[RMDB]
Description:
Structure probing data (2A3) for a 207-nucleotide construct. 2A3 adducts were read by reverse transcription with SuperScript II with manganese. For 2A3, 877 sequencing reads were counted. Conditions: 150 mM KOAc, 10 mM MgCl2 and 150 mM bicine (pH 8.5), 24 C. Source: RMDB library M2RFPK, as collected in RNAgym.
RNA sequence: GGGAACGACUCGAGUAGAGUCGAAAACGGUCCUGCCAUGAGACCGUAACGAGGACAUGUCGCCUCGAAUGGCGUCGGGGAGCCGGCAGCUUACCCCAAGGAUGAGCGCCUAAUGCCGAUACCCGGGUAUACGCUACCCCGUUCGCGGGGUAGCGAACCACGUAUGACGAUUCGUCGUCAUACGUGGAAAAGAAACAACAACAACAAC
Reactivity to 2A3 in 0.01 (KOAc 150mM, MgCl2 10mM, bicine 150mM(pH8.5), 24C), signal-to-noise 1, nucleotides 027 to 156: c010g020g000u020c010c020u020g000c010c010a110u130g000a070g000a050c010c020g030u020a030a000c000g000a000g010g010a060c070a200u270g060u200c170g000c000c000u000c010g010a030a000u000g020g010c040g070u040c010g020g000g000g000a040g100c040c000g000g000c020a010g000c010u010u070a080c000c000c040c100a030a060g060g000a110u030g020a030g000c040g090c000c110u100a120a060u040g000c000c010g000a000u080a110c010c000c000g040g000g000u240a160u040a090c010g010c000u000a010c000c000c000c000g010u010u040c140g010c010g080g010g000g000u000a000g000c000g000a000a000